[RMDB]
RNA sequence: GGGAACGACUCGAGUAGAGUCGAAAAGAUUAAGUGGGAGCGUCGCCCUUUCGGUGCAUCGGAUAUUAAUUAGCCAGUGCGUGGCACUACGCAUAUUGAUGUCUACUUUGGCGUAGACUGUGCCAAUUUAAGGAUUGCUGGGCAAUCCAGCCCUAGACACUGAUAUAGCGUUCGCGCUAUAUCAGUGAAAAGAAACAACAACAACAAC
Reactivity to 2A3 in 0.01 (KOAc 150mM, MgCl2 10mM, bicine 150mM(pH8.5), 24C), signal-to-noise 6, nucleotides 027 to 156: g030a030u170u170a060a030g060u080g040g000g000a050g040c030g020u040c040g040c010c000c060u040u060u060c060g020g010u040g010c020a030u060c060g030g010a020u030a040u180u110a140a040u080u060a070g050c020c020a020g020u010g020c030g010u040g030g000c030a020c070u080a010c030g000c030a010u050a070u110u190g100a070u090g000u000c010u010a040c020u070u110u170g090g000c070g000u010a010g020a050c010u010g010u020g010c010c020a020a060u070u080u120a050a010g030g000a050u050u070g010c040u070g010g080g000c030a010a040u080c010c000a000g000c000c000c000u040a050g010a020
Reactivity to DMS in 0.01 (KOAc 150mM, MgCl2 10mM, bicine 150mM(pH8.5), 24C), signal-to-noise 3, nucleotides 027 to 156: g000a130u000u000a090a070g020u000g000g020g000a090g030c020g050u000c040g000c030c010c030u000u000u000c040g000g030u010g020c030a070u000c040g000g010a110u000a070u000u000a050a150u000u000a130g000c020c010a070g020u000g020c010g040u000g000g020c050a190c040u000a060c050g000c010a120u010a100u010u010g000a060u010g000u000c060u000a070c040u000u000u010g010g020c100g010u000a040g000a060c050u010g000u000g020c010c020a020a080u000u010u000a070a120g020g010a140u000u000g010c000u010g000g020g010c050a100a140u000c100c070a110g020c010c020c000u000a110g010a300

This 207-nucleotide RNA was probed chemically with 2A3 and DMS.
For 2A3 the reverse transcriptase was SuperScript II with manganese.
For DMS, 6,505 sequencing reads were counted.